[RMDB]
RNA sequence: GGGAACGACUCGAGUAGAGUCGAAAAUGAGUGAGUGUAAUUUUGGAGGAAGACAUUGGGUUUAAUAUCAAGGUGCUCCAAGUUCUUGUUGAUGUAGAAACUCUGUGGCACAUAUGAUUAAGUCUGUUUCAGUUAAGUGAAUUAAUCAAUUUACCCACGUGCAAUAGAAGUUCGCUUCUAUUGCACGAAAAGAAACAACAACAACAAC
Reactivity to DMS in 0.01 (KOAc 150mM, MgCl2 10mM, bicine 150mM(pH8.5), 24C), signal-to-noise 3, nucleotides 027 to 156: u020g000a090g010u000g000a060g040u010g000u000a040a090u010u000u000u000g030g020a060g040g010a080a050g030a040c060a130u020u050g010g030g010u000u000u000a050a110u000a080u010c040a060a140g040g040u000g020c030u000c060c050a050a220g000u010u000c030u000u000g010u010u000g030a130u000g010u000a090g010a090a060a080c040u000c070u000g000u010g030g030c030a040c060a100u000a110u010g010a040u000u000a000a020g020u000c020u000g000u000u000u000c070a120g010u010u010a050a110g020u000g000a030a050u000u000a030a050u010c050a030a230u000u000u000a080c020c010c020a140
Reactivity to 2A3 in 0.01 (KOAc 150mM, MgCl2 10mM, bicine 150mM(pH8.5), 24C), signal-to-noise 5, nucleotides 027 to 156: u160g010a050g020u070g020a050g010u050g030u090a120a180u030u100u100u110g050g010a030g020g040a040a030g040a030c020a030u040u100g040g010g040u070u120u170a160a090u170a060u090c060a040a060g050g000u010g030c010u000c050c030a020a030g020u010u020c030u070u040g100u080u090g050a110u080g030u100a050g080a070a050a030c040u060c100u050g010u040g010g020c010a000c010a020u150a100u090g010a000u030u070a030a010g020u000c040u040g040u030u080u030c030a050g010u100u110a100a040g030u040g070a010a050u010u070a090a040u090c070a020a030u010u050u150a070c010c000c010a030